[RMDB]
RNA sequence: GGGAACGACUCGAGUAGAGUCGAAAAGAUAUGGAGCAGGGUGACAUGAUGGGACUCGGAAACGAGUCCAACAUCAACAGCACCUGCUCCUAAGUCAAAGUAACGACUACUUCGGUAGUCGUUACAACACUUGUAGCAGCUUCGGCUGCUACAAGUGAAAAGAAACAACAACAACAAC
Reactivity to DMS in 0.01 (KOAc 150mM, MgCl2 10mM, bicine 150mM(pH8.5), 24C), signal-to-noise 2, nucleotides 027 to 126: g020a040u000a130u010g000g000a010g010c000a010g010g010g010u020g010a060c090a150u000g000a000u000g010g010g010a040c000u000c000g050g000a020a070a120c000g000a010g000u000c000c000a030a100c020a010u000c000a120a240c300a110g010c010a030c000c000u000g010c000u000c010c000u000a000a060g010u020c010a110a110a200g010u000a000a000c000g000a030c000u020a010c000u000u020c290g040g020u000a000g010u000c000g020u000u010a000c010a140a240
Reactivity to 2A3 in 0.01 (KOAc 150mM, MgCl2 10mM, bicine 150mM(pH8.5), 24C), signal-to-noise 2, nucleotides 027 to 126: g000a010u040a020u050g020g000a030g000c050a020g120g100g210u160g100a230c160a270u280g020a020u000g000g040g010a000c010u020c030g000g000a010a010a000c000g010a000g000u000c010c000a000a010c000a000u010c010a040a300c030a050g000c000a040c010c000u000g000c000u000c020c000u020a020a000g020u010c020a050a050a260g020u000a010a010c000g010a000c000u000a000c000u080u120c300g040g000u000a000g020u020c000g000u000u000a010c000a020a000